[RMDB]
RNA sequence: GGGAACGACUCGAGUAGAGUCGAAAAAUCGCGAGAGAUUCUACAAGAAGUUUUUAAUAGGAUGAUAUUUAACGCAUUCCCGUUAAUCGUCUGACUACGCUACUCAUCCUUUCCGCCUCAAAUUAACGGCUUACGAUUUAUUCGUAAAUCGUAAGCCAAAAGAAACAACAACAACAAC
Reactivity to 2A3 in 0.01 (KOAc 150mM, MgCl2 10mM, bicine 150mM(pH8.5), 24C), signal-to-noise 3, nucleotides 027 to 126: a010u070c020g000c020g010a000g010a020g010a120u040u030c000u050a060c060a050a040g080a090a020g070u070u020u030u070u180a190a140u110a070g020g000a020u050g000a010u010a040u090u090u040a060a010c020g010c050a060u080u050c030c000c000g000u020u090a050a030u070c020g020u000c050u010g050a060c000u040a030c020g000c020u010a020c020u050c010a020u030c020c000u050u040u000c000c020g050c000c010u000c040a050a080a070u050u080a070a090c070
Reactivity to DMS in 0.01 (KOAc 150mM, MgCl2 10mM, bicine 150mM(pH8.5), 24C), signal-to-noise 2, nucleotides 027 to 126: a100u010c100g020c110g010a080g010a230g010a020u010u000c010u010a060c040a060a190g040a080a080g000u040u010u020u000u000a060a100u000a030g040g000a050u010g000a030u010a110u030u030u050a020a090c090g000c090a100u000u000c010c030c020g000u010u020a050a030u010c070g020u000c060u000g000a120c050u000a090c120g000c030u020a020c070u000c010a070u000c020c010u000u000u000c020c060g010c050c040u000c090a070a060a100u060u020a100a070c190